Chemical mapping of a 177-nucleotide RNA with 2A3 and DMS. The RNA was probed in 150 mM KOAc, 10 mM MgCl2 and 150 mM bicine (pH 8.5) at 24 C. DMS adducts were read by reverse transcription with MarathonRT. For DMS, 732 sequencing reads were counted. Values cover nucleotides 27 to 126. The data come from the RNA Mapping Database (RMDB), library M2PK50.
[RMDB]
RNA sequence: GGGAACGACUCGAGUAGAGUCGAAAAUCCUCACGUUUCGACGUGAGGAGAACUCUAGCAAGGGAAGGGAACCCUCGGGAAGGGGUCCCAAGGCGAUCUCAACAAGGGCCAAAUUCGUUUGGCCCAACGAUUCAGCGUGAUUCGUCACGCUGAAUCGAAAAGAAACAACAACAACAAC
Reactivity to 2A3 in 0.01 (KOAc 150mM, MgCl2 10mM, bicine 150mM(pH8.5), 24C), signal-to-noise 1, nucleotides 027 to 126: u000c010c000u000c000a010c000g020u040u030u130c280g130a000c000g000u040g020a010g000g010a030g000a000a020c000u000c010u040a060g070c050a080a050g100g040g070a010a160g100g010g000a080a040c030c000c010u070c070g140g050g080a050a000g050g000g000g000u000c000c040c000a000a000g050g000c020g040a040u040c020u000c020a050a140c070a140a130g000g000g000c000c000a000a000a020u100u100c270g040u050u010u000g070g000c000c000c020a010a000
Reactivity to DMS in 0.01 (KOAc 150mM, MgCl2 10mM, bicine 150mM(pH8.5), 24C), signal-to-noise 1, nucleotides 027 to 126: u010c000c000u000c000a010c010g030u000u000u010c190g030a010c000g000u000g000a000g020g000a000g030a070a040c060u000c020u000a050g010c080a080a180g000g000g010a130a190g020g000g010a020a040c010c010c000u000c090g000g000g000a270a060g000g000g030g010u000c000c000c000a040a040g010g000c000g000a070u000c010u000c100a150a130c300a070a240g000g000g000c000c000a000a000a080u000u000c260g000u000u000u000g010g000c010c000c000a000a000